[RMDB]
RNA sequence: GGGAACGACUCGAGUAGAGUCGAAAAAGGGACACCUCACUCACAUUUUACCAACAGAGUGAGAGUGAGGUUAACCUCUCAUUUCUGUUGGUGAACGCAGAAGUUAGAGGUUGAGAACACUGACAACUGCGUUCAUAGUUGUGAGUGUUCUGUCCCACGACUCAAGAAUGUUCGCAUUCUUGAGUCGAAAAGAAACAACAACAACAAC
Reactivity to 2A3 in 0.01 (KOAc 150mM, MgCl2 10mM, bicine 150mM(pH8.5), 24C), signal-to-noise 2, nucleotides 027 to 156: a020g020g000g000a000c000a010c000c000u000c000a000c000u030c010a020c010a010u050u160u120u270a040c010c000a010a000c000a000g030a000g010u000g010a010g000a000g020u090g050a090g070g100u060u060a070a030c010c010u000c000u000c000a020u150u300u030c000u000g000u000u010g010g080u020g020a000a000c010g000c010a010g000a060a000g050u030u040a090g040a060g110g080u030u050g010a010g020a040a000c050a000c030u000g030a000c010a030a040c000u000g000c030g040u010u020c020a020u050a040g070u040u070g000u010g010a000g010u010g000u010u010c010u000g000u000c020c000c000a010
Chemical mapping of a 207-nucleotide RNA with 2A3. It was measured as part of the RMDB library OK3TST. The reactions ran in a buffer of 150 mM KOAc, 10 mM MgCl2 and 150 mM bicine (pH 8.5), at 24 C.